[RMDB]
RNA sequence: GGGAACGACUCGAGUAGAGUCGAAAAUGAGAAGUCGUCAGUAGUUCGACGUGAGCAGAAGCCCGCCUCGAUAUGCUAUGUGGACGAGGGCAUGCCCAAGUCACACCUUAACCCUAGCGGGACGCAAUACGCGUAUAGGAUUCGUCCUAUACGCGUAAAAAGAAACAACAACAACAAC
Reactivity to DMS in 0.01 (KOAc 150mM, MgCl2 10mM, bicine 150mM(pH8.5), 24C), signal-to-noise 5, nucleotides 027 to 126: u000g000a080g020a120a150g010u000c010g020u000c020a150g020u000a100g000u000u000c050g020a030c070g020u000g010a060g010c020a100g010a150a220g010c020c010c000g000c010c040u010c060g000a080u010a030u010g010c030u000a130u000g020u010g000g000a030c040g010a300g000g010g000c040a070u010g000c000c010c010a030a240g010u000c010a050c020a030c060c060u000u000a070a100c030c000c010u000a090g000c050g000g000g000a040c120g000c140a090a150
Reactivity to 2A3 in 0.01 (KOAc 150mM, MgCl2 10mM, bicine 150mM(pH8.5), 24C), signal-to-noise 3, nucleotides 027 to 126: u220g030a060g020a150a050g100u040c000g020u020c010a050g080u110a020g030u220u100c050g010a010c000g000u040g030a030g000c020a020g060a210a020g060c010c000c000g000c030c000u070c010g020a060u020a030u150g010c050u040a040u130g160u020g090g050a030c000g000a030g000g040g000c040a080u140g010c000c000c000a000a020g010u000c010a030c000a000c170c010u040u100a070a080c010c000c000u020a010g020c030g010g020g000a010c020g010c000a040a140